[RMDB]
RNA sequence: GGGAACGACUCGAGUAGAGUCGAAAAGUCAUCUUAUAGCCAAGAGUACGAAGGAUGACACGGUUUAUUAUGAAAGAAUUUCACCAAAAAUUGAUUACGCCUUAGGCUAGACUAGGUCCAAAGAAUCCAGUGAGAGAAGCCCUGCAAUGUAAAUCCAGUAGGUUAACUAGUUCGCUAGUUAACCUACAAAAGAAACAACAACAACAAC
Reactivity to DMS in 0.01 (KOAc 150mM, MgCl2 10mM, bicine 150mM(pH8.5), 24C), signal-to-noise 1, nucleotides 027 to 156: g030u000c040a000u010c010u000u000a230u000a180g000c050c030a070a200g010a230g000u000a060c100g000a250a160g010g010a050u000g010a160c060a090c190g000g030u010u000u000a110u050u010a140u000g000a100a110a190g030a090a090u000u030u000c090a040c090c060a050a060a060a150a060u000u000g000a140u000u010a070c120g000c030c040u000u030a060g040g010c030u000a140g030a080c090u000a130g010g030u010c050c000a060a140a040g000a060a040u000c050c010a060g010u000g000a180g010a180g030a060a060g000c040c030c030u010g020c080a040a090u000g000u000a010a040a300u000c050c000a300
Reactivity to 2A3 in 0.01 (KOAc 150mM, MgCl2 10mM, bicine 150mM(pH8.5), 24C), signal-to-noise 2, nucleotides 027 to 156: g000u000c000a010u000c010u060u110a090u110a120g000c020c020a110a060g080a090g090u080a010c040g020a080a010g040g010a010u020g010a010c020a010c060g020g030u080u100u070a190u190u060a070u230g150a070a100a110g060a070a090u070u070u080c090a120c070c050a000a070a040a130a140u110u110g070a070u080u100a040c080g000c010c000u060u100a070g000g040c000u000a020g020a050c020u040a050g010g060u000c020c040a090a080a030g030a030a000u000c010c010a030g030u030g020a050g030a020g000a100a000g010c010c000c000u010g000c040a000a090u010g000u070a030a000a150u010c000c000a000